RNA sequence: GGGAACGACUCGAGUAGAGUCGAAAAGGCCGGAAGCGUCGGGAAGGCCACGUCGCCGUGGGCGCGAAUGUCGAUUUGGGCGCGUUCGGGGACGUACGCGUCCCCCCAUUCCACCACAUCGCUGGGCGAUGGAGCGUGAAUUCGUUCACGCUCCAUCAAAAGAAACAACAACAACAAC
Reactivity to DMS in 0.01 (KOAc 150mM, MgCl2 10mM, bicine 150mM(pH8.5), 24C), signal-to-noise 5, nucleotides 027 to 126: g000g010c070c030g020g000a060a080g020c020g000u010c050g010g000g010a150a070g020g000c020c090a100c080g010u010c050g010c020c020g000u020g000g000g010c050g020c040g000a070a060u030g000u020c100g010a160u000u010u020g020g010g000c020g020c020g020u000u010c080g010g010g020g010a090c000g030u010a030c140g000c010g000u020c000c000c020c010c050c040a090u000u010c020c020a110c040c020a070c080a060u010c060g000c040u000g000g030g030c120
Reactivity to 2A3 in 0.01 (KOAc 150mM, MgCl2 10mM, bicine 150mM(pH8.5), 24C), signal-to-noise 9, nucleotides 027 to 126: g030g010c030c020g040g030a090a030g030c040g030u040c040g060g020g060a070a030g050g020c020c010a050c040g130u140c030g020c050c010g040u110g030g030g030c050g010c020g030a050a060u130g060u170c080g040a080u070u070u160g040g010g010c030g000c060g050u050u060c020g000g000g020g050a050c010g000u020a000c130g000c000g040u040c010c000c000c000c000c000a030u070u020c020c010a030c000c010a020c010a050u070c020g020c060u030g010g050g010c040